[RMDB]
RNA sequence: GGGAACGACUCGAGUAGAGUCGAAAAUCUCUAGAGGGGAUUAAUCCCUCUGCUUCAAAGUAACCAAAACAAAGAAAGCUGAGCCAGCUUUGCUGGGUACCACACCUGUCCUGCAGACAAAGAUGAGGGUUGUAUGAAACUUCGGUUUCAUACAACCAAAAGAAACAACAACAACAAC
Reactivity to DMS in 0.01 (KOAc 150mM, MgCl2 10mM, bicine 150mM(pH8.5), 24C), signal-to-noise 1, nucleotides 027 to 126: u000c000u000c010u130a020g000a040g010g000g020g030a220u050u000a190a060u060c000c010c010u020c000u000g000c040u000u000c000a230a110a040g030u000a060a070c110c090a080a040a090a240c070a110a140a040g010a040a040a000g000c040u010g000a140g100c070c040a070g010c060u010u000u000g000c040u010g000g090g040u000a070c040c050a000c120a050c050c010u000g000u000c010c000u000g020c080a080g000a040c020a060a060a150g000a070u000g000a100g000
Reactivity to 2A3 in 0.01 (KOAc 150mM, MgCl2 10mM, bicine 150mM(pH8.5), 24C), signal-to-noise 2, nucleotides 027 to 126: u000c000u000c010u010a030g020a030g010g040g110g040a090u090u300a100a200u210c000c000c000u010c000u000g000c020u080u140c040a130a140a070g050u050a090a020c020c020a060a050a110a070c070a040a070a020g100a050a130a000g020c050u020g020a030g020c010c020a020g020c010u000u070u120g020c040u000g010g040g000u020a070c040c010a030c000a000c000c030u000g010u050c020c030u040g110c030a060g030a080c000a010a120a020g080a010u110g100a050g030
The record gives the reactivity of an RNA of 177 nucleotides to DMS and 2A3. The RNA was probed in 150 mM KOAc, 10 mM MgCl2 and 150 mM bicine (pH 8.5) at 24 C.